[RMDB]
RNA sequence: GGGAACGACUCGAGUAGAGUCGAAAAUGCUGGACCUGUUUUCGUCUACCCUGUAGAUCGAGCUGUGUGUUUUGAAGUGUUCAUACACAAGCUAGACUGCAAGGUGAACGACAAAAUGAGAACGAUAGAAUAAAGAUUGGUUCGCCAAUCUUUAUUCAAAAGAAACAACAACAACAAC
Reactivity to 2A3 in 0.01 (KOAc 150mM, MgCl2 10mM, bicine 150mM(pH8.5), 24C), signal-to-noise 6, nucleotides 027 to 126: u110g010c070u120g040g050a080c010c020u040g080u040u040u000u020c020g000u000c010u010a010c000c000c000u000g000u010a040g010a300u010c020g010a010g000c010u030g050u010g010u010g030u300u170u080u160g060a110a100g190u160g160u300u010c000a010u010a010c000a000c010a010a000g000c000u000a000g000a000c010u000g010c010a010a000g010g000u030g000a040a020c020g020a010c050a010a090a030a080u160g060a090g030a100a020c060g040a050u100a180
Reactivity to DMS in 0.01 (KOAc 150mM, MgCl2 10mM, bicine 150mM(pH8.5), 24C), signal-to-noise 6, nucleotides 027 to 126: u010g010c070u000g010g010a180c050c020u000g010u000u010u000u000c020g010u000c020u010a030c010c000c030u000g020u000a010g000a130u000c020g010a020g000c000u000g020u010g030u000g010u000u000u000u010g020a020a240g020u010g010u010u000c010a010u000a010c000a000c000a080a020g000c000u000a070g010a040c010u000g010c000a010a020g000g000u000g010a030a020c030g010a040c300a030a020a050a080u010g000a090g010a070a130c070g010a130u000a110
Annotation: This 177-nucleotide RNA was probed chemically with 2A3 and DMS. The reactions ran in a buffer of 150 mM KOAc, 10 mM MgCl2 and 150 mM bicine (pH 8.5), at 24 C. For 2A3, 7,808 sequencing reads were counted. For DMS the reverse transcriptase was MarathonRT.